[RMDB]
RNA sequence: GGGAACGACUCGAGUAGAGUCGAAAAUAUGCAGUGGACGACGGGCAGCGCAAAAACGACCGCUCAGGUUGUUUCUUCUAGCCCUUCUUGCUCACCUCGACGCUGGGAGGACCAUUGCUGGCGUGCGCGUAGCGGACGGGUUCGCCCGUCCGCUACGAAAAGAAACAACAACAACAAC
Reactivity to DMS in 0.01 (KOAc 150mM, MgCl2 10mM, bicine 150mM(pH8.5), 24C), signal-to-noise 2, nucleotides 027 to 126: u020a030u000g000c030a040g000u010g000g000a010c110g030a080c100g000g000g000c000a090g020c110g010c160a010a060a000a020a010c020g020a000c000c000g050c160u040c170a180g020g010u010u010g000u010u000u000c030u030u000c090u010a180g020c010c000c000u030u030c000u000u000g000c070u010c080a210c090c030u000c040g010a040c120g000c030u030g010g010g020a060g000g000a210c030c030a080u010u020g010c010u020g000g000c040g030u000g010c060g020
Reactivity to 2A3 in 0.01 (KOAc 150mM, MgCl2 10mM, bicine 150mM(pH8.5), 24C), signal-to-noise 6, nucleotides 027 to 126: u270a070u120g040c060a020g040u070g050g060a050c070g010a030c040g040g010g000c010a040g020c050g040c130a050a040a030a030a030c020g030a030c020c020g050c130u160c190a030g030g010u000u000g000u000u020u000c050u090u030c020u040a050g010c000c000c010u010u020c010u030u070g000c020u020c030a060c010c000u030c040g030a020c030g000c020u020g000g010g010a020g000g040a030c010c000a080u020u190g030c000u000g000g020c020g020u060g030c050g000